[RMDB]
RNA sequence: GGGAACGACUCGAGUAGAGUCGAAAAACGAGGUACGCCUCGAAAAUAUGACCGGUGUCAUAGCCUCUAGCACACAGAGGCCGCGUGGGUUCAACUCCCCCCCUUUUCCGAGGGUAUCGGAAACCAAAAAACACAAUUUGGUUCGCCAAAUUGUGAAGCCAAACGUAAAGUUCGCUUUACGUUUGGCAAAAGAAACAACAACAACAAC
Reactivity to 2A3 in 0.01 (KOAc 150mM, MgCl2 10mM, bicine 150mM(pH8.5), 24C), signal-to-noise 2, nucleotides 027 to 156: a000c020g010a000g000g010u060a020c150g100c000c000u000c010g020a070a020a020a050u120a070u080g020a020c050c070g110g000u140g020u100c090a170u100a030g000c020c000u000c010u080a050g030c130a030c020a010c010a240g010a000g000g000c000c000g000c020g020u150g070g050g000u110u180c010a030a050c040u030c000c000c000c000c000c000c000u010u200u000u000c000c000g010a000g020g000g000u070a020u000c000g000g000a000a000a000c020c010a060a030a010a000a050a010c010a000c000a000a010u000u010u000g030g000u030u000c070g000c110c000a000a000a000u010u000g000u000g000a010a030